[RMDB]
RNA sequence: GGGAACGACUCGAGUAGAGUCGAAAAGCCAGCAAAAGUCUGACAAUGUGCUUAAGCCAAAUUCAGAAGUGUAGCUGAGGCCGGGCACGGUGGCUCACAUUUGUAAUCCCAGCAUCUUCGGAGGCCAAAGGGAGUGGAAUACUUGAGGCAGGAGUUAGAUUACCAGCAUAUUCGUAUGCUGGUAAUCAAAAGAAACAACAACAACAAC
Reactivity to DMS in 0.01 (KOAc 150mM, MgCl2 10mM, bicine 150mM(pH8.5), 24C), signal-to-noise 2, nucleotides 027 to 156: g000c030c030a080g030c020a080a080a090a150g030u000c030u000g000a030c060a090a060u010g010u000g010c060u010u010a100a090g030c030c010a050a060a150u000u000c060a110g040a100a110g020u000g030u000a090g020c030u010g030a110g030g010c000c030g060g020g020c060a020c040g000g030u010g020g000c010u010c020a060c040a130u000u000u020g000u000a040a140u000c020c010c010a150g020c040a100u010c030u020u000c120g040g010a100g000g000c030c030a050a080a080g010g030g020a050g030u010g030g050a070a130u010a060c050u000u010g020a030g000g020c040a060g000g000a080g020u030u000a150
Reactivity to 2A3 in 0.01 (KOAc 150mM, MgCl2 10mM, bicine 150mM(pH8.5), 24C), signal-to-noise 3, nucleotides 027 to 156: g040c020c020a010g020c040a050a020a080a060g070u080c050u050g020a030c020a040a130u060g020u050g060c030u180u140a050a040g010c030c020a070a150a170u160u060c050a050g020a150a110g110u050g030u170a080g020c010u010g020a040g000g020c020c020g000g020g030c060a030c090g030g020u030g000g000c010u030c010a030c010a060u010u060u110g060u080a050a040u010c010c000c010a010g010c010a030u030c040u100u090c030g070g010a020g010g000c020c050a040a020a020g010g000g010a050g010u050g030g050a070a030u060a170c020u010u060g020a020g010g000c020a030g030g040a040g020u060u140a020